[RMDB]
RNA sequence: GGGAACGACUCGAGUAGAGUCGAAAACAUCGAUGCCAGUACUCUGCGGUAAAUUAUUGGUGUCGAAUACAAAUGAAAUGCACAUUUAUGCAAUCGUAAUGCACUUCCGCAGGAACCAUUGGACACACGUCAUAGUGGGGUUCGCCCCACUAUGACGAAAAGAAACAACAACAACAAC
Reactivity to 2A3 in 0.01 (KOAc 150mM, MgCl2 10mM, bicine 150mM(pH8.5), 24C), signal-to-noise 2, nucleotides 027 to 126: c010a060u020c030g000a010u040g010c020c040a020g000u030a010c070u050c030u120g030c030g020g010u090a130a180a150u140u050a030u020u060g000g000u030g010u000c010g000a000a050u140a080c050a050a170a040u180g050a000a070a110u130g000c010a010c020a030u100u220u230a070u090g030c030a030a120u100c040g080u200a040a040u080g000c000a030c120u040u000c010c020g000c010a000g060g010a030a020c010c010a040u050u060g120g020a000c030a000c000a010
Reactivity to DMS in 0.01 (KOAc 150mM, MgCl2 10mM, bicine 150mM(pH8.5), 24C), signal-to-noise 1, nucleotides 027 to 126: c030a190u000c000g000a000u020g000c000c000a000g010u000a050c280u000c030u000g030c000g040g000u000a060a050a070u000u000a040u020u000g060g000u010g010u000c010g030a000a050u010a270c150a130a060a050u010g050a060a060a110u020g000c000a050c160a100u000u000u050a090u030g050c110a040a210u000c120g000u000a050a070u000g000c080a060c070u000u000c030c010g160c000a000g000g020a080a030c140c110a060u000u020g020g030a070c070a080c240a140
An RNA of 177 nucleotides, treated with 2A3 and DMS and read out base by base. The 2A3 profile rests on 1,292 reads. It was measured as part of the RMDB library OK2TRN. Values are in units of 0.01, from 0 to 300, in steps of 10. For 2A3 the reverse transcriptase was SuperScript II with manganese. The DMS profile rests on 593 reads.